[RMDB]
RNA sequence: GGGAACGACUCGAGUAGAGUCGAAAAGGAGGCUGAGGUGGGUGGAUCCCCUGAGGACAGGAGUUCGAGAUCAGCCUGGCCAACAUGGUGUAACCCUGUCUUUACUAAAAAUACAAAAAUUAGCCAGCGAUGUAUUAUAGUUCGCUAUAAUACAUCGAAAAGAAACAACAACAACAAC
Reactivity to DMS in 0.01 (KOAc 150mM, MgCl2 10mM, bicine 150mM(pH8.5), 24C), signal-to-noise 7, nucleotides 027 to 126: g010g010a090g010g010c040u000g000a050g010g020u000g000g010g030u000g010g010a100u000c030c030c020c070u000g010a080g010g000a060c030a030g000g010a090g020u010u000c080g010a100g000a070u000c050a060g000c030c000u000g010g000c030c040a060a080c080a090u000g010g010u000g010u000a060a060c030c010c010u000g010u000c010u000u000u000a060c080u020a000a030a030a050a060u010a070c070a030a040a040a050a080u000u000a060g010c030c030a100g010
Reactivity to 2A3 in 0.01 (KOAc 150mM, MgCl2 10mM, bicine 150mM(pH8.5), 24C), signal-to-noise 5, nucleotides 027 to 126: g040g010a030g000g020c040u030g010a010g020g070u090g020g040g000u030g020g040a100u050c010c000c000c000u010g030a040g020g010a020c010a010g000g020a140g020u100u110c090g060a040g020a180u060c020a000g030c000c000u000g010g020c020c000a040a020c040a110u160g010g000u040g040u060a020a030c010c000c000u010g020u010c020u030u080u020a030c060u130a080a040a050a060a050u160a070c050a020a140a040a050a110u080u060a020g030c010c010a020g040

Structure probing data (DMS and 2A3) for a 177-nucleotide construct. It was measured as part of the RMDB library OK2TRN. DMS adducts were read by reverse transcription with MarathonRT. The RNA was probed in 150 mM KOAc, 10 mM MgCl2 and 150 mM bicine (pH 8.5) at 24 C.